[RMDB]
RNA sequence: GGGAACGACUCGAGUAGAGUCGAAAAGAGACGGUCGGCCCAGAAGUCUCGAGACCGGAUCCUGAAUGUCUUCCACGAGCUGAACCUGAAGGAUGCCAUCAGCUACGUGGCUGAGGUAGCAGAGCCGCCUUCCAUAUCGGUUCGCCGAUAUGGAAGGAAAAGAAACAACAACAACAAC
Reactivity to DMS in 0.01 (KOAc 150mM, MgCl2 10mM, bicine 150mM(pH8.5), 24C), signal-to-noise 2, nucleotides 027 to 126: g000a110g030a060c090g000g010u000c030g030g000c000c030c000a130g010a100a150g010u020c020u020c030g000a080g020a090c080c040g000g020a100u010c050c040u000g000a100a100u010g010u010c010u000u010c030c020a030c050g000a060g000c010u010g010a040a110c070c050u020g020a070a080g010g000a080u000g020c110c130a250u000c000a000g000c000u000a100c120g030u010g010g000c180u000g010a040g000g010u000a060g030c080a050g000a060g020c030c080g030
Reactivity to 2A3 in 0.01 (KOAc 150mM, MgCl2 10mM, bicine 150mM(pH8.5), 24C), signal-to-noise 1, nucleotides 027 to 126: g030a020g000a010c050g000g020u060c030g060g000c000c000c040a020g120a090a010g070u000c010u030c020g040a050g010a020c000c050g000g020a070u070c020c020u070g200a210a100u110g040u060c010u040u000c000c000a030c040g020a010g000c050u030g080a130a150c020c020u060g060a150a080g070g020a070u130g060c040c000a080u010c000a030g000c010u120a180c090g080u090g000g000c010u070g000a000g020g000u070a030g030c030a010g000a010g090c000c010g030
The record gives the reactivity of an RNA of 177 nucleotides to DMS and 2A3. The reactions ran in a buffer of 150 mM KOAc, 10 mM MgCl2 and 150 mM bicine (pH 8.5), at 24 C. 2A3 adducts were read by reverse transcription with SuperScript II with manganese. It was measured as part of the RMDB library OK2TRN.